[RMDB]
RNA sequence: GGGAACGACUCGAGUAGAGUCGAAAAUGUGGACCCGCGUUAAAAAACUAUAGGCCUUAAAAAUAAAGGAUAACGAAAAUAAUUUAGCUUUAGCUGCGUAGUCAGCUAACGUCAGCCUGAGAGUCCCGCGACUCAGAGUCUGGCGUCGACAGCGGGGGAGUUAAUUACAGUUCGCUGUAAUUAACUCAAAAGAAACAACAACAACAAC
Reactivity to 2A3 in 0.01 (KOAc 150mM, MgCl2 10mM, bicine 150mM(pH8.5), 24C), signal-to-noise 2, nucleotides 027 to 156: u080g040u060g050g040a040c020c000c000g010c010g010u010u030a190a100a070a120a060a040c100u170a180u090a160g150g010c000c000u090u020a080a100a120a150a150u230a190a120a050g010g000a010u110a170a000c030g020a040a050a040a080u170a030a090u090u140u190a020g040c000u000u020u100a000g000c020u020g020c010g110u030a040g160u240c000a000g000c010u000a000a000c000g030u020c000a000g000c000c000u000g010a010g000a000g080u050c000c000c000g020c030g030a000c000u000c000a000g030a020g150u060c010u000g010g010c000g020u000c030g000a020c010a020g000c000g000g000g010g030
Reactivity to DMS in 0.01 (KOAc 150mM, MgCl2 10mM, bicine 150mM(pH8.5), 24C), signal-to-noise 1, nucleotides 027 to 156: u000g030u000g020g000a100c000c000c030g040c040g040u000u050a000a110a120a110a050a080c000u000a120u000a300g000g040c000c010u000u000a000a120a120a030a180u000a060a050a040g000g010a220u000a100a250c050g020a110a080a040a120u000a060a180u000u000u000a050g000c000u010u000u000a000g020c000u000g010c000g020u000a120g000u020c000a060g010c000u000a000a000c000g020u000c020a020g010c110c000u000g010a110g050a300g000u000c000c020c080g040c070g020a040c000u020c000a020g000a120g010u030c000u020g000g010c030g030u000c100g000a050c080a070g040c020g000g000g050g030